Chemical mapping of a 177-nucleotide RNA with 2A3 and DMS. Conditions: 150 mM KOAc, 10 mM MgCl2 and 150 mM bicine (pH 8.5), 24 C.
RNA sequence: GGGAACGACUCGAGUAGAGUCGAAAACUGCAAGAUCCUCCGUGGCCAUCGCCACCAAGUCCGGCGCUGCAAUCACGAAAGACAUCCGACACCUCCCAGCUGGCCGGUGUGAUCUGACUGUCGCCCACAUCUCCCAAAUAUUCGUAUUUGGGAGAUGAAAAGAAACAACAACAACAAC
Reactivity to 2A3 in 0.01 (KOAc 150mM, MgCl2 10mM, bicine 150mM(pH8.5), 24C), signal-to-noise 4, nucleotides 027 to 126: c020u030g030c060a030a040g010a070u030c010c010u000c030c030g040u070g040g000c010c040a130u100c100g010c020c010a040c030c010a080a020g070u010c020c030g020g020c050g010c040u030g010c020a040a110u110c040a050c150g110a130a060a020g120a040c040a080u080c050c040g030a020c020a050c040c010u050c000c020c000a010g040c030u040g030g010c020c000g030g000u040g030u060g010a010u010c010u010g040a040c010u010g030u050c010g040c000c000c000a030
Reactivity to DMS in 0.01 (KOAc 150mM, MgCl2 10mM, bicine 150mM(pH8.5), 24C), signal-to-noise 9, nucleotides 027 to 126: c030u010g010c160a130a060g010a050u000c020c020u000c070c070g020u000g010g010c040c090a070u000c110g010c030c020a060c050c080a080a090g010u010c050c050g010g010c050g010c060u000g010c090a100a060u010c080a080c090g000a050a050a080g010a070c090a060u010c020c040g000a090c080a060c030c020u000c020c010c040a120g020c080u010g010g020c020c020g010g010u000g010u000g010a040u000c020u000g010a130c070u010g010u000c070g000c000c000c020a220
Reactivities are rounded to 0.1 and cut off at 0 and 3.
The 2A3 profile rests on 7,974 reads.
DMS adducts were read by reverse transcription with MarathonRT.
2A3 adducts were read by reverse transcription with SuperScript II with manganese.
Reactivities are given for positions 27 through 126.
DMS (dimethyl sulfate) methylates the pairing face of unpaired adenines and cytosines.